[RMDB]
RNA sequence: GGGAACGACUCGAGUAGAGUCGAAAACGAACCACAUCAGUCAGAUCAACGACUUCGAACUCAUGCAACACGACGCAGUCGAUCUAAGCAAACUCAUCAGCUUCGUCAGUCACUCACCAAUCGUCCGAGAGCACCACUGCAAGCCAUACAAAGCAACCCCACUCAAAGGUUUCGACCUUUGAGUGGGAAAAGAAACAACAACAACAAC
Reactivity to 2A3 in 0.01 (KOAc 150mM, MgCl2 10mM, bicine 150mM(pH8.5), 24C), signal-to-noise 2, nucleotides 027 to 156: c000g040a010a020c030c000a000c010a070u070c020a010g110u050c040a010g030a060u050c040a060a000c110g090a030c000u090u060c070g040a070a060c000u010c040a090u200g090c050a110a060c030a010c190g060a030c060g100c090a000g050u010c000g030a040u000c000u040a080a000g000c030a120a060a020c030u020c020a170u020c040a080g010c010u010u000c000g030u000c030a010g030u060c030a010c000u020c020a040c020c100a090a090u060c030g120u010c000c010g070a080g020a010g050c000a010c010c010a020c010u010g030c030a030a060g010c000c020a030u030a140c090a020a090a020g080c000a010a100c000

An RNA of 207 nucleotides, treated with 2A3 and read out base by base. 2A3 adducts were read by reverse transcription with SuperScript II with manganese. The RNA was probed in 150 mM KOAc, 10 mM MgCl2 and 150 mM bicine (pH 8.5) at 24 C. The data come from the RNA Mapping Database (RMDB), library OK3TST. Reactivities are given for positions 27 through 156.